Structure probing data (2A3 and DMS) for a 177-nucleotide construct.
RNA sequence: GGGAACGACUCGAGUAGAGUCGAAAAGACGGGCGUGAUCUCGAUCGCGUUCGAAUCGACGUCGCCGCAGCUCGAUCUCGCCGCGCUGAAGCUCGGCAAGCUGCGCGCGCAUUUGCACGGCGAGCAACGAUAGUGGGGUGUUCGCACCCCACUAUCGAAAAGAAACAACAACAACAAC
Reactivity to 2A3 in 0.01 (KOAc 150mM, MgCl2 10mM, bicine 150mM(pH8.5), 24C), signal-to-noise 2, nucleotides 027 to 126: g060a000c020g000g010g000c000g000u000g010a020u020c040u070c180g110a030u000c020g010c010g010u010u020c010g000a020a050u030c030g020a040c010g070u070c040g000c010c000g010c020a010g000c000u100c100g130a220u000c060u000c090g000c000c020g020c030g000c040u210g120a190a030g000c050u050c060g050g000c010a030a010g030c020u060g010c040g010c060g010c000g000c020a050u120u090u080g050c030a020c040g020g010c010g010a040g000c040a050a090
Reactivity to DMS in 0.01 (KOAc 150mM, MgCl2 10mM, bicine 150mM(pH8.5), 24C), signal-to-noise 2, nucleotides 027 to 126: g020a260c060g010g000g000c010g040u000g010a000u000c050u010c300g010a040u000c000g000c030g010u000u000c010g010a070a100u000c030g030a050c080g020u000c020g010c000c030g020c070a050g000c020u000c140g000a080u030c080u000c120g000c000c000g020c050g010c000u030g030a150a170g000c000u000c010g000g000c080a120a060g000c040u000g000c030g010c110g030c060g020c080a050u000u010u000g040c020a080c010g000g000c020g000a040g000c110a080a180
High 2A3 reactivity points to a flexible backbone, as in loops and unpaired stretches. 2A3 adducts were read by reverse transcription with SuperScript II with manganese. Conditions: 150 mM KOAc, 10 mM MgCl2 and 150 mM bicine (pH 8.5), 24 C.